[RMDB]
Background:
An RNA of 177 nucleotides, treated with 2A3 and DMS and read out base by base. It was measured as part of the RMDB library OK2TRN. Values are in units of 0.01, from 0 to 300, in steps of 10. For 2A3, 1,593 sequencing reads were counted. High DMS reactivity at an A or C suggests that its Watson-Crick edge is free.
RNA sequence: GGGAACGACUCGAGUAGAGUCGAAAAUUGACACCAAAUUUACAUCACUAGAUCCUAAGGAAGACCCAUUUCUACCUGAGGGCCUCAAUAACGAAGAGAGCACGCAGCAUCUAGUAGAGAUGGUAUGGCAUAACUUUGGUUUCGACCAAAGUUAUGCAAAAGAAACAACAACAACAAC
Reactivity to 2A3 in 0.01 (KOAc 150mM, MgCl2 10mM, bicine 150mM(pH8.5), 24C), signal-to-noise 2, nucleotides 027 to 126: u060u070g070a020c010a020c070c000a050a040a000u100u130u130a050c030a010u050c020a020c040u000a050g000a120u050c020c000u040a070a010g060g040a050a070g040a050c020c000c000a020u000u010u000c010u010a030c010c010u010g000a060g020g020g000c010c010u020c020a070a190u160a220a070c110g060a180a100g040a030g000a030g030c040a010c100g060c040a020g040c020a080u000c060u080a000g000u000a000g000a000g000a020u000g010g030u050a100u120g140
Reactivity to DMS in 0.01 (KOAc 150mM, MgCl2 10mM, bicine 150mM(pH8.5), 24C), signal-to-noise 2, nucleotides 027 to 126: u010u000g010a220c180a230c040c040a060a080a050u010u010u010a100c070a060u000c090a060c110u020a080g000a100u000c020c010u000a080a070g040g030a120a120g000a170c160c050c010a020u000u000u000c020u000a010c050c020u000g020a030g000g000g010c000c020u000c030a050a040u020a080a090c300g000a180a110g000a050g010a140g040c010a040c040g020c070a010g000c230a100u020c060u010a010g040u000a000g000a070g000a050u010g010g000u000a070u000g000